[RMDB]
RNA sequence: GGGAACGACUCGAGUAGAGUCGAAAAUGCGACGGGUCCAACGGCGCCAGAUUGGUGCGCUGACGUCAGAUACCUGUAGAAGGAGGUGGGACGGGUCCACCGGCGUUGCACUAGCGCGUUGGCGCCACAGGCGACUACUGUUCGCAGUAGUCGCCUGAAAAGAAACAACAACAACAAC
Reactivity to 2A3 in 0.01 (KOAc 150mM, MgCl2 10mM, bicine 150mM(pH8.5), 24C), signal-to-noise 3, nucleotides 027 to 126: u090g040c040g020a010c060g030g010g070u030c040c020a070a030c110g040g000c000g000c000c020a070g040a230u090u300g090g040u130g010c010g000c080u050g020a010c000g000u030c010a020g060a130u120a100c000c000u020g050u100a080g120a280a020g030g040a020g000g000u030g000g000g030a190c200g090g000g050u020c000c000a000c000c000g020g000c000g020u030u170g060c030a030c110u040a050g000c020g010c000g070u030u040g000g010c010g010c000c000a000
Reactivity to DMS in 0.01 (KOAc 150mM, MgCl2 10mM, bicine 150mM(pH8.5), 24C), signal-to-noise 2, nucleotides 027 to 126: u010g020c080g020a080c010g000g030g030u000c050c090a100a160c110g020g020c000g070c000c010a000g000a200u090u020g010g020u000g000c000g050c040u020g000a040c010g000u000c010a190g020a180u070a070c020c020u020g010u050a090g010a110a080g000g020a110g000g000u010g000g000g040a110c180g000g040g000u060c020c040a010c020c020g000g000c000g020u000u020g010c090a100c110u020a050g000c020g100c030g040u040u030g000g010c030g020c000c020a250
Conditions: 150 mM KOAc, 10 mM MgCl2 and 150 mM bicine (pH 8.5), 24 C. Chemical mapping of a 177-nucleotide RNA with 2A3 and DMS. High DMS reactivity at an A or C suggests that its Watson-Crick edge is free. DMS adducts were read by reverse transcription with MarathonRT. 2A3 is a SHAPE reagent: it acylates the 2'-hydroxyl of flexible nucleotides of all four kinds.